[RMDB]
RNA sequence: GGGAACGACUCGAGUAGAGUCGAAAAUGAGACAAACACGCUUCACAAUGUGCGGCAAAGAAACAUUGUUUAUGCAAAGGCACUUCGCAAUGUGUGCUCAAACAUUGCUUAAUCAAACACGCUUCACAAAAGAAUCAGUGGUUCGCCACUGAUUCAACUUACUUAGUCGCUUCGGCGACUAAGUAAGAAAAGAAACAACAACAACAAC
Reactivity to DMS in 0.01 (KOAc 150mM, MgCl2 10mM, bicine 150mM(pH8.5), 24C), signal-to-noise 1, nucleotides 027 to 156: u010g040a100g070a150c050a150a130a120c190a060c040g020c050u050u000c070a170c070a000a050u000g020u000g000c100g000g020c060a110a160a060g020a020a060a070c000a070u000u000g060u000u010u000a060u040g070c030a090a190a040g000g020c020a070c050u000u000c220g050c050a060a070u000g020u000g050u000g040c040u000c040a070a080a020c050a040u000u000g010c020u000u000a020a170u040c060a110a170a120c140a060c220g060c050u000u000c040a140c110a080a060a200a130g000a060a020u020c000a010g040u000g000g030u000u000c300g010c000c050a050c000u000g000a010u040u000c010a040a100
Reactivity to 2A3 in 0.01 (KOAc 150mM, MgCl2 10mM, bicine 150mM(pH8.5), 24C), signal-to-noise 5, nucleotides 027 to 156: u220g020a030g050a050c040a020a100a010c060a000c040g000c000u000u010c010a010c000a030a010u020g000u010g000c030g060g010c080a100a090a120g100a020a060a000c010a010u010u020g100u030u110u110a140u170g050c040a050a040a060g180g000c000a000c020u020u030c050g020c020a010a000u010g010u000g040u030g020c080u080c150a050a050a000c000a000u000u030g000c010u080u140a090a070u160c080a070a060a030c080a030c120g080c010u140u120c110a070c050a100a080a050a040g000a000a000u000c000a010g010u000g020g020u030u030c170g040c040c000a000c000u000g000a000u000u000c000a000a000